This 207-nucleotide RNA was probed chemically with DMS and 2A3. For 2A3, 2,141 sequencing reads were counted. The DMS profile rests on 3,504 reads. The RNA was probed in 150 mM KOAc, 10 mM MgCl2 and 150 mM bicine (pH 8.5) at 24 C. 2A3 adducts were read by reverse transcription with SuperScript II with manganese.
[RMDB]
RNA sequence: GGGAACGACUCGAGUAGAGUCGAAAAUCACGGUUGCCCAGGCUGGUCUGGAACUCUUAAACUCAAACGACCUGCCUGCCUUGACCUUCCAAAGUGCUAGGAUUACAAGUGUGAGCCACCAUGCCUGACCUGUUUUGGUACUUUAAGUCAGUUCACACAGUGAAGAUCGAUUCGUCGAUCUUCACUGAAAAGAAACAACAACAACAAC
Reactivity to DMS in 0.01 (KOAc 150mM, MgCl2 10mM, bicine 150mM(pH8.5), 24C), signal-to-noise 1, nucleotides 027 to 156: u010c040a080c070g030g000u000u000g000c040c070c000a090g000g050c030u010g000g000u000c020u010g060g000a100a080c080u000c050u000u010a110a090a160c070u000c040a010a090a200c120g000a050c020c000u000g000c000c000u000g050c040c010u010u010g010a030c000c040u000u030c000c060a040a060a060g010u000g000c030u010a030g030g000a130u010u000a080c050a040a090g000u000g010u000g010a100g020c010c050a030c070c020a060u000g000c030c010u010g000a040c030c040u000g010u000u000u000u000g020g000u000a040c040u010u000u010a080a090g000u010c030a080g010u000u000c040a030c020a080
Reactivity to 2A3 in 0.01 (KOAc 150mM, MgCl2 10mM, bicine 150mM(pH8.5), 24C), signal-to-noise 4, nucleotides 027 to 156: u080c010a010c080g000g020u050u030g070c010c000c000a000g030g010c000u040g000g000u010c010u040g100g090a160a130c030u030c050u230u230a160a110a070c060u110c220a080a100a070c080g000a010c000c000u010g000c010c000u000g000c010c000u020u100g020a070c000c000u070u050c040c010a080a070a060g080u130g020c040u060a010g050g000a110u090u100a100c040a100a020g000u040g020u010g100a030g040c000c010a030c030c010a040u090g030c010c010u040g040a080c020c000u050g100u050u050u080u050g040g000u120a040c010u100u120u140a080a030g000u060c070a070g000u040u060c020a010c000a000